[RMDB]
RNA sequence: GGGAACGACUCGAGUAGAGUCGAAAACAUCUUUCCUCCCUACACAGUGACUCCAGCUUGGGAGGGGCAGGGCUAGGCUGAGCCAGCACGCCCUGUGGUGUCUGCCUGCCACGUGCAGCUCUGGAGUAAAACCUGGAGAAGUUCGCUUCUCCAGGAACCCCUAGUAACUGUUCGCAGUUACUAGGGGAAAAGAAACAACAACAACAAC
Reactivity to 2A3 in 0.01 (KOAc 150mM, MgCl2 10mM, bicine 150mM(pH8.5), 24C), signal-to-noise 2, nucleotides 027 to 156: c030a050u090c090u130u110u050c000c000u020c000c010c000u120a060c160a010c050a130g140u070g120a030c000u000c000c010a000g000c040u080u060g000g000g000a000g010g000g010g000c000a000g000g000g010c010u170a070g010g110c030u070g040a050g190c140c010a000g010c020a000c040g000c000c000c010u000g000u020g010g000u010g050u030c030u020g040c020c000u050g040c030c010a160c270g100u270g000c010a020g000c000u000c010u070g000g020a000g000u000a000a030a020a010c000c000u000g000g000a000g000a000a000g010u040u090c090g030c150u000u000c000u000c000c000a000g000g000a000a000
The record gives the reactivity of an RNA of 207 nucleotides to 2A3. The reactions ran in a buffer of 150 mM KOAc, 10 mM MgCl2 and 150 mM bicine (pH 8.5), at 24 C. As a SHAPE reagent, 2A3 marks flexible, mostly unpaired nucleotides at the ribose 2'-OH. The 2A3 profile rests on 1,453 reads.